Structure probing data (DMS and 2A3) for a 177-nucleotide construct.

[RMDB]
RNA sequence: GGGAACGACUCGAGUAGAGUCGAAAAGGGAAACCGAUAACUUACGGCUGGUUCUAACUGGAACACAGGACAGCGGAAUUGUCUACGAUGUGGCACGUAAACAGGACUAACUGGAAGUGAUAAUCCAACUGUGGAGCUCGUUCGCGAGUUCCACAGUAAAAGAAACAACAACAACAAC
Reactivity to DMS in 0.01 (KOAc 150mM, MgCl2 10mM, bicine 150mM(pH8.5), 24C), signal-to-noise 5, nucleotides 027 to 126: g030g000g000a050a080a150c040c020g000a100u030a080a050c040u010u020a070c050g000g010c030u000g010g000u000u020c020u000a060a090c060u000g010g010a110a070c060a050c060a070g000g010a050c060a020g010c140g010g010a100a110u030u010g010u010c010u000a060c120g030a140u010g000u000g000g010c100a090c060g000u010a060a060a060c120a050g010g000a100c050u010a030a070c050u000g000g000a040a050g000u000g000a100u000a070a080u020c020c040a100
Reactivity to 2A3 in 0.01 (KOAc 150mM, MgCl2 10mM, bicine 150mM(pH8.5), 24C), signal-to-noise 9, nucleotides 027 to 126: g070g000g010a090a030a010c020c000g020a050u080a140a080c020u030u070a030c010g020g000c010u020g010g040u040u000c020u030a060a150c050u050g030g070a090a010c040a010c010a050g030g040a020c010a010g040c050g140g060a150a170u130u040g010u010c010u030a060c080g150a150u080g020u040g060g040c080a010c050g050u100a030a110a050c040a030g020g020a010c010u030a060a020c010u030g010g020a020a040g020u030g060a070u040a110a040u040c010c010a020
Conditions: 150 mM KOAc, 10 mM MgCl2 and 150 mM bicine (pH 8.5), 24 C. The DMS profile rests on 10,799 reads. For DMS the reverse transcriptase was MarathonRT. Source: RMDB library OK1LIB, as collected in RNAgym.